Annotation
Chemical mapping of a 177-nucleotide RNA with 2A3 and DMS. It was measured as part of the RMDB library OK1LIB. Conditions: 150 mM KOAc, 10 mM MgCl2 and 150 mM bicine (pH 8.5), 24 C. The 2A3 profile rests on 3,571 reads. For DMS the reverse transcriptase was MarathonRT.
[RMDB]
RNA sequence: GGGAACGACUCGAGUAGAGUCGAAAAAAGUGGCUAAUCAUAUGGCGGAAUUAAGUGGUGUUAAACUAGGUGACCCAAUACCACACCAUCACAAUGAUAGUGAAAAAAUGGACUAUAAAUCAUAUGCCACAGUGAUUCUUUUCGAAGAAUCACUGUGAAAAGAAACAACAACAACAAC
Reactivity to 2A3 in 0.01 (KOAc 150mM, MgCl2 10mM, bicine 150mM(pH8.5), 24C), signal-to-noise 5, nucleotides 027 to 126: a000a000g110u090g020g020c010u040a070a070u130c040a000u080a050u140g020g000c050g000g100a070a050u130u030a160a100g020u010g000g000u000g010u050u130a150a130a120c130u050a130g030g040u080g070a060c000c010c000a000a040u130a040c040c000a020c020a020c020c010a010u070c020a000c020a030a110u100g080a090u100a080g040u050g160a080a060a050a010a010a000u120g030g020a010c010u050a010u100a240a070a010u100c050a020u030a070u240g040c020
Reactivity to DMS in 0.01 (KOAc 150mM, MgCl2 10mM, bicine 150mM(pH8.5), 24C), signal-to-noise 2, nucleotides 027 to 126: a040a090g010u010g000g010c040u000a060a020u030c020a010u010a140u010g000g020c060g000g010a090a060u010u020a050a060g000u050g000g000u000g010u030u040a070a100a110c110u010a100g000g020u010g000a090c040c010c030a030a070u010a060c000c060a120c030a060c070c020a070u000c060a030c160a100a140u010g000a040u000a020g000u010g000a000a000a030a090a090a090u010g000g000a100c060u010a010u000a020a030a060u010c110a000u010a000u000g000c270